[RMDB]
RNA sequence: GGGAACGACUCGAGUAGAGUCGAAAAGAAUCACUCGAUGUUCUCACCGAAAGCACGUAAUCGCCGGUGUAACUCAUGUUGGCUGGGGGGCCUCCUGGCGCACGGCGAGGAUGGGGUGCGCUCAGAAUAGUGGGCAACUAUUCGUAGUUGCCCACUAAAAAGAAACAACAACAACAAC
Reactivity to DMS in 0.01 (KOAc 150mM, MgCl2 10mM, bicine 150mM(pH8.5), 24C), signal-to-noise 1, nucleotides 027 to 126: g030a000a110u000c000a020c000u000c000g020a020u060g000u000u020c000u000c000a190c030c150g020a030a080a120g040c050a020c130g000u030a090a150u000c000g050c000c000g040g050u040g020u000a070a100c070u030c050a080u030g000u000u000g000g020c030u010g010g020g030g000g010g000c110c020u000c000c050u000g000g020c070g000c010a010c030g000g000c100g000a090g000g000a090u080g020g000g000g020u000g020c020g000c140u090c020a070g000a150a010
Reactivity to 2A3 in 0.01 (KOAc 150mM, MgCl2 10mM, bicine 150mM(pH8.5), 24C), signal-to-noise 2, nucleotides 027 to 126: g020a000a020u010c000a000c000u000c000g000a010u110g000u000u000c000u000c000a020c010c010g280a150a030a000g010c000a000c030g070u010a010a010u000c020g010c000c050g050g100u050g000u010a040a060c020u060c180a210u150g030u010u120g160g000c020u030g050g000g030g000g110g020c000c000u000c000c020u090g020g000c020g000c010a010c020g030g000c000g020a030g080g000a020u200g100g130g000g000u080g020c020g040c040u060c010a040g080a240a060